[RMDB]
The record gives the reactivity of an RNA of 177 nucleotides to DMS. Conditions: 150 mM KOAc, 10 mM MgCl2 and 150 mM bicine (pH 8.5), 24 C.
RNA sequence: GGGAACGACUCGAGUAGAGUCGAAAAGAUAUGGAUCCAUAUGGAGAGGUGCCAUCGGAAACGAUGGCGCCUCGUUGAAAUAUGGAGUCCUAAGUCAAAUCAUAAUCGAGUUCGCUCGAUUAUGAAACUACGUGUCACUGUUCGCAGUGACACGUAGAAAAGAAACAACAACAACAAC
Reactivity to DMS in 0.01 (KOAc 150mM, MgCl2 10mM, bicine 150mM(pH8.5), 24C), signal-to-noise 1, nucleotides 027 to 126: g000a010u000a010u000g000g010a100u000c000c010a000u000a000u000g000g010a040g010a020g020g010u000g000c000c000a010u000c000g010g000a010a010a030c000g010a030u000g000g010c010g000c000c000u000c000g010u000u020g000a150a190a010u000a000u000g000g000a050g030u010c000c000u000a000a070g000u000c010a120a120a140u000c010a000u000a000a010u010c000g020a010g010u000u010c300g010c000u000c000g020a000u000u000a020u010g000a010a100a110